[RMDB]
RNA sequence: GGGAACGACUCGAGUAGAGUCGAAAAGAUGUACGCUGAUUCGUCAGCCGCAUGCCCAGGUGGCCGCGAUCUUCAAGGCUACGGCGCGGAUAGGUCCGCGCUGAUCGUUUUCCUCCAACGACGCUAUAAAAGGAACGAAGGUUCGCCUUCGUUCCAACAGCAUAGGGAACUUCGGUUCCCUAUGCUGAAAAGAAACAACAACAACAAC
Reactivity to DMS in 0.01 (KOAc 150mM, MgCl2 10mM, bicine 150mM(pH8.5), 24C), signal-to-noise 1, nucleotides 027 to 156: g000a030u010g050u030a100c050g000c000u100g010a130u010u000c300g040u000c000a020g000c030c300g070c030a060u000g020c030c000c000a080g020g040u010g000g000c060c000g020c050g010a040u010c010u000u010c060a070a300g000g000c000u000a020c010g010g000c000g000c000g000g010a220u010a140g000g010u000c020c010g000c010g030c000u000g000a030u010c010g040u020u000u030u020c040c020u000c040c050a120a120c070g000a060c070g000c110u000a170u030a060a030a130a180g000g000a020a010c000g000a010a040g010g010u000u000c250g000c010c000u000u000c000g040u000u010c000c010a030a040
Reactivity to 2A3 in 0.01 (KOAc 150mM, MgCl2 10mM, bicine 150mM(pH8.5), 24C), signal-to-noise 2, nucleotides 027 to 156: g100a010u060g010u090a080c110g020c000u000g000a080u060u190c300g010u020c060a000g000c020c040g010c020a000u030g010c010c000c020a020g010g000u020g000g010c010c000g160c020g050a000u040c000u010u000c020a000a000g000g000c000u020a020c000g000g000c000g000c000g000g000a050u110a260g270g090u040c000c000g000c000g030c010u000g030a010u000c010g000u070u010u030u100c020c080u130c050c070a140a170c120g130a090c090g030c090u080a060u080a280a130a070a060g000g010a000a000c000g030a000a000g000g010u020u110c140g080c000c000u000u010c000g000u000u000c000c000a000a000
This 207-nucleotide RNA was probed chemically with DMS and 2A3. DMS (dimethyl sulfate) methylates the pairing face of unpaired adenines and cytosines. Conditions: 150 mM KOAc, 10 mM MgCl2 and 150 mM bicine (pH 8.5), 24 C. For 2A3, 1,052 sequencing reads were counted.